[RMDB]
RNA sequence: GGGAACGACUCGAGUAGAGUCGAAAAAGUGAGAUACUUUUCUGCUGAGUGAUAAGCGGAGGACGUCAUUGCCUUCUCACUUGCACGAAGAUUCAGCUCCGCUACCUCGUACUUUUGAUCUGAAUUGCAAGUUCCCAGCAUUCGUGCUGGGAACUUGAAAAGAAACAACAACAACAAC
Reactivity to DMS in 0.01 (KOAc 150mM, MgCl2 10mM, bicine 150mM(pH8.5), 24C), signal-to-noise 1, nucleotides 027 to 126: a030g000u000g000a040g020a160u000a090c120u000u010u000u000c080u010g030c030u020g000a100g040u000g000a110u000a060a050g010c030g030g000a010g010g000a030c100g000u000c230a030u000u000g020c060c030u000u020c020u000c010a040c040u000u000g030c030a050c130g000a090a120g030a090u000u000c050a180g000c040u000c020c060g010c040u000a160c050c030u030c070g030u010a060c150u000u000u010u000g030a090u000c090u000g010a020a100u000u000g030
Reactivity to 2A3 in 0.01 (KOAc 150mM, MgCl2 10mM, bicine 150mM(pH8.5), 24C), signal-to-noise 1, nucleotides 027 to 126: a010g020u020g020a100g000a020u130a290c030u000u130u010u090c030u060g010c040u040g010a060g030u070g100a200u050a260a030g040c000g010g010a010g030g050a160c070g120u160c040a100u040u170g030c000c000u040u030c010u010c010a040c000u000u010g020c070a020c030g050a020a010g000a050u070u080c010a030g000c020u010c020c040g040c050u070a020c000c020u000c020g040u150a150c060u090u230u090u150g020a040u040c050u040g080a070a100u050u060g000

An RNA of 177 nucleotides, treated with DMS and 2A3 and read out base by base.
It was measured as part of the RMDB library OK2TST.
Values cover nucleotides 27 to 126.
The DMS profile rests on 960 reads.
2A3 adducts were read by reverse transcription with SuperScript II with manganese.
The reactions ran in a buffer of 150 mM KOAc, 10 mM MgCl2 and 150 mM bicine (pH 8.5), at 24 C.